[RMDB]
RNA sequence: GGGAACGACUCGAGUAGAGUCGAAAAGCCAAAAGUGCGAAGCGCCUACGCGAGGAAAUCAGUCCACUGGACUGAUUUCUGAUCCCGCUUCGAUCCGUUGGAUAAUACGAUAAGACAAAUAAUUAGACCUUAGCAUAGCUUUCGAGCUAUGCUAAGGAAAAGAAACAACAACAACAAC
Reactivity to DMS in 0.01 (KOAc 150mM, MgCl2 10mM, bicine 150mM(pH8.5), 24C), signal-to-noise 5, nucleotides 027 to 126: g030c000c000a040a020a150a090g010u000g010c020g000a020a010g000c000g000c280c060u020a130c250g000c070g000a170g000g000a000a000a000u000c000a000g010u000c010c000a130c290u040g000g020a000c000u000g000a000u000u010u000c000u000g010a160u030c040c130c010g000c020u000u000c020g010a080u020c050c090g020u000u010g000g000a070u000a070a050u020a130c130g000a090u030a070a070g000a100c170a090a120a110u020a060a080u020u010a160g010a280
Reactivity to 2A3 in 0.01 (KOAc 150mM, MgCl2 10mM, bicine 150mM(pH8.5), 24C), signal-to-noise 6, nucleotides 027 to 126: g060c000c000a050a040a030a000g120u070g070c000g010a030a000g000c000g020c040c110u130a040c060g010c060g020a020g000g020a000a000a000u000c010a000g000u010c010c020a260c300u270g000g000a000c000u000g010a000u000u000u000c000u000g000a000u020c030c000c000g000c000u000u010c000g030a050u030c010c030g080u060u060g050g010a050u080a190a040u090a170c080g070a090u050a140a060g080a050c120a050a140a060u200a060a030u220u090a070g060a090
Chemical mapping of a 177-nucleotide RNA with DMS and 2A3. 2A3 is a SHAPE reagent: it acylates the 2'-hydroxyl of flexible nucleotides of all four kinds. DMS adducts were read by reverse transcription with MarathonRT. Conditions: 150 mM KOAc, 10 mM MgCl2 and 150 mM bicine (pH 8.5), 24 C. Values cover nucleotides 27 to 126. For 2A3 the reverse transcriptase was SuperScript II with manganese. Source: RMDB libraries RFM100 and RFMREP, as collected in RNAgym.